[RMDB]
RNA sequence: GGGAACGACUCGAGUAGAGUCGAAAAUAGAGGUCGCUGUUCUGAGCUUAACGUCUGUUUUAACUGAAACGCCGCAUUCUACACUACAACGCUAAGGCGAGGAAAUGUUCAUAGUGUAAGGAGAGCGCCGUUUACUCAUAUUCGUAUGAGUAAACGGAAAAGAAACAACAACAACAAC
Reactivity to DMS in 0.01 (KOAc 150mM, MgCl2 10mM, bicine 150mM(pH8.5), 24C), signal-to-noise 7, nucleotides 027 to 126: u010a080g010a080g010g010u000c140g020c020u000g000u030u020c110u000g010a100g000c030u010u020a090a080c050g010u000c020u000g020u000u010u010u010a060a130c100u000g010a060a050a140c100g000c150c030g020c050a130u020u010c020u000a050c030a020c020u000a030c180a060a080c040g010c030u010a100a080g030g000c040g000a090g020g010a060a080a100u040g030u010u010c130a130u000a020g010u010g000u000a030a050g000g000a030g000a110g010c050g010
Reactivity to 2A3 in 0.01 (KOAc 150mM, MgCl2 10mM, bicine 150mM(pH8.5), 24C), signal-to-noise 9, nucleotides 027 to 126: u130a010g050a030g050g020u040c030g000c020u030g050u170u060c050u100g090a020g020c020u060u100a060a020c030g090u000c040u030g070u020u060u010u070a080a080c040u060g070a080a030a030c060g040c040c010g010c020a020u040u000c010u020a010c010a000c020u070a030c030a110a030c020g010c010u070a070a090g160g000c020g020a040g030g090a050a100a060u180g030u070u060c040a030u060a050g010u000g000u030a070a060g020g010a030g010a020g010c020g000
An RNA of 177 nucleotides, treated with DMS and 2A3 and read out base by base. For DMS the reverse transcriptase was MarathonRT. Reactivities are given for positions 27 through 126. Conditions: 150 mM KOAc, 10 mM MgCl2 and 150 mM bicine (pH 8.5), 24 C.